[RMDB]
RNA sequence: GGGAACGACUCGAGUAGAGUCGAAAAGCGUUGUAUGCCAUUCACAGACUUCCCUACGCUGUGGGACAUGCAUCCGUAGACCAUUUCUCUGCUGUAAAUGCUGCUAUGAUCAUGUUAUAGCAACUCCGUGCAUAAAGAGGUUCGCCUCUUUAUGCACAAAAGAAACAACAACAACAAC
Reactivity to 2A3 in 0.01 (KOAc 150mM, MgCl2 10mM, bicine 150mM(pH8.5), 24C), signal-to-noise 3, nucleotides 027 to 126: g050c050g010u000u010g040u040a060u000g010c050c060a120u100u080c030a010c000a050g040a080c050u090u090c030c010c010u020a030c090g030c000u000g010u020g010g030g010a030c010a010u010g010c000a020u010c080c010g020u030a030g100a100c000c010a000u000u100u010c080u020c030u100g090c020u060g100u150a020a070a060u120g030c020u010g000c010u040a030u060g020a040u060c040a060u200g020u100u030a040u030a030g030c000a000a030c020u030c100c050
Reactivity to DMS in 0.01 (KOAc 150mM, MgCl2 10mM, bicine 150mM(pH8.5), 24C), signal-to-noise 3, nucleotides 027 to 126: g010c040g010u000u010g000u020a030u010g000c010c020a100u010u010c010a000c020a040g010a070c130u000u010c050c020c020u010a110c300g000c000u000g000u010g020g010g010a020c010a020u000g000c050a010u000c130c030g000u000a050g000a140c190c050a110u010u010u000c040u000c070u020g020c080u000g040u000a030a060a050u000g010c040u000g030c030u000a040u010g010a020u000c170a070u000g020u000u010a020u000a030g010c010a010a080c080u010c150c120
An RNA of 177 nucleotides, treated with 2A3 and DMS and read out base by base. The data come from the RNA Mapping Database (RMDB), library 15KREP.